The record gives the reactivity of an RNA of 207 nucleotides to 2A3 and DMS. The data come from the RNA Mapping Database (RMDB), library M2RFPK. The reactions ran in a buffer of 150 mM KOAc, 10 mM MgCl2 and 150 mM bicine (pH 8.5), at 24 C. 2A3 adducts were read by reverse transcription with SuperScript II with manganese. The 2A3 profile rests on 4,078 reads.
[RMDB]
RNA sequence: GGGAACGACUCGAGUAGAGUCGAAAAGAAACUCGUUUCGCGUUGGCUGCCUAAUUCAAGGAAUUAGCGUGCCUUCAUGCUAAGGGUUGGAUAUCUGCUAAAACCCGGUGCAUUCAUCAAUGCAGGUCUCAUCCAAAUGCCUUCGGGCAUUUGGAAAUCGAUUCACUUAUUUCGAUAAGUGAAUCGAAAAAGAAACAACAACAACAAC
Reactivity to 2A3 in 0.01 (KOAc 150mM, MgCl2 10mM, bicine 150mM(pH8.5), 24C), signal-to-noise 4, nucleotides 027 to 156: g060a020a050a010c020u020c040g080u030u120u070c090g020c000g020u020u020g010g000c030u090g020c030c020u020a000a020u030u040c140a230a150g170g040a080a000u000u010a010g040c060g070u050g000c010c000u030u020c060a050u060g000c020u030a010a050g010g010g000u020u020g000g000a030u040a040u070c010u030g000c020u050a030a020a030a060c000c000c000g030g010u050g000c060a110u070u200c040a070u100c060a100a150u110g000c000a010g000g040u030c040u050c060a100u000c000c000a010a000a000u010g010c010c010u060u060c200g070g000g000c000a000u000u000u010g000g000a000a000a010
Reactivity to DMS in 0.01 (KOAc 150mM, MgCl2 10mM, bicine 150mM(pH8.5), 24C), signal-to-noise 3, nucleotides 027 to 156: g030a120a060a060c010u000c040g020u000u000u000c020g010c090g010u010u000g010g010c000u010g000c100c000u000a030a030u000u000c010a220a190g030g010a050a060u000u000a020g000c030g000u000g000c030c010u000u000c010a090u000g030c030u000a150a140g020g020g020u000u000g010g030a160u000a080u020c070u010g020c070u000a100a090a040a060c020c010c020g000g090u000g020c020a050u000u020c070a080u010c060a080a170u010g000c020a050g020g010u010c080u000c060a190u010c010c010a000a010a030u000g010c000c010u000u000c300g060g020g010c000a000u010u000u000g000g000a000a010a040